[RMDB]
RNA sequence: GGGAACGACUCGAGUAGAGUCGAAAAACUAAUCCAAAGCAAGUAUAGGAGAACAGGUUUUCAACUAUUUUUAGGCAGAUAAAAAAUAGUAUUUGACAGUCUAACACUAACUGAACAAUAAGUGUUAAAAACUCCCUCCUGUUCGCAGGAGGGAGAAGGUAUGCUUAAAGUUCGCUUUAAGCAUACCAAAAGAAACAACAACAACAAC
Reactivity to 2A3 in 0.01 (KOAc 150mM, MgCl2 10mM, bicine 150mM(pH8.5), 24C), signal-to-noise 5, nucleotides 027 to 156: a000c050u070a090a020u020c010c010a020a010a010g010c000a010a010g020u050a030u060a080g040g010a030g020a090a080c090a150g100g000u030u010u010u030c030a060a010c000u000a010u000u010u010u010u030a050g060g040c060a040g050a200u190a070a060a000a000a000a000u010a010g010u010a050u050u020u040g030a000c010a000g000u000c000u000a000a000c000a000c000u000a010a000c000u010g020a020a000c010a020a010u010a010a000g000u000g010u010u020a010a060a010a010a010c000u000c000c000c000u000c000c000u010g020u040u060c190g010c070a000g000g000a000g000g000g000a000g000a000a000
Reactivity to DMS in 0.01 (KOAc 150mM, MgCl2 10mM, bicine 150mM(pH8.5), 24C), signal-to-noise 1, nucleotides 027 to 156: a220c030u000a090a190u000c040c010a010a120a300g010c030a010a120g030u010a050u000a180g030g000a100g000a200a140c020a090g010g030u000u000u000u000c000a040a030c000u000a030u000u010u000u000u050a100g010g010c070a030g000a160u000a010a030a000a030a010a040u000a030g040u000a070u000u000u010g020a200c020a000g000u000c020u010a040a000c000a020c020u000a030a070c020u000g010a170a150c300a060a090u010a000a030g000u000g000u000u000a090a040a080a100a100c020u000c000c000c040u000c020c000u000g030u010u000c300g000c040a020g000g000a040g000g000g000a000g000a000a000